The record gives the reactivity of an RNA of 177 nucleotides to DMS and 2A3. For DMS the reverse transcriptase was MarathonRT. The data come from the RNA Mapping Database (RMDB), library OK2TRN. The 2A3 profile rests on 12,449 reads. 2A3 is a SHAPE reagent: it acylates the 2'-hydroxyl of flexible nucleotides of all four kinds.
RNA sequence: GGGAACGACUCGAGUAGAGUCGAAAAAAGGAAAGACGGCCGAAGAGAAGGUCUUCAUGCAGACUCACCCCGGAGACGUGAUCGCUGGUCUUCUUUCCAUAGAUCCAGCUGGCACGCGCGACGUGCAAAGUUUACGUAUUUUCGAAUACGUAAACUUAAAAGAAACAACAACAACAAC
Reactivity to DMS in 0.01 (KOAc 150mM, MgCl2 10mM, bicine 150mM(pH8.5), 24C), signal-to-noise 9, nucleotides 027 to 126: a090a090g010g000a020a020a030g010a030c060g000g000c020c010g010a100a250g010a040g000a300a060g000g000u000c010u000u000c020a120u010g030c150a090g000a110c090u010c100a130c040c020c110c080g020g000a030g000a030c010g010u000g010a250u000c030g010c300u010g010g010u000c010u000u000c020u000u000u000c010c010a070u000a040g000a080u010c010c010a150g010c100u010g010g010c010a010c010g010c060g010c150g000a110c020g030u000g010c010a070
Reactivity to 2A3 in 0.01 (KOAc 150mM, MgCl2 10mM, bicine 150mM(pH8.5), 24C), signal-to-noise 5, nucleotides 027 to 126: a000a010g010g000a000a020a000g000a000c020g000g010c010c010g040a150a020g020a000g000a040a010g170g010u000c000u000u010c050a110u170g100c040a020g060a300c040u070c150a100c000c010c020c040g030g000a020g000a020c270g300u020g010a030u010c010g000c080u060g000g000u010c000u000u000c000u000u020u000c000c010a030u050a040g030a020u000c000c010a010g040c070u140g100g000c010a000c010g020c030g050c070g100a230c010g010u010g000c020a060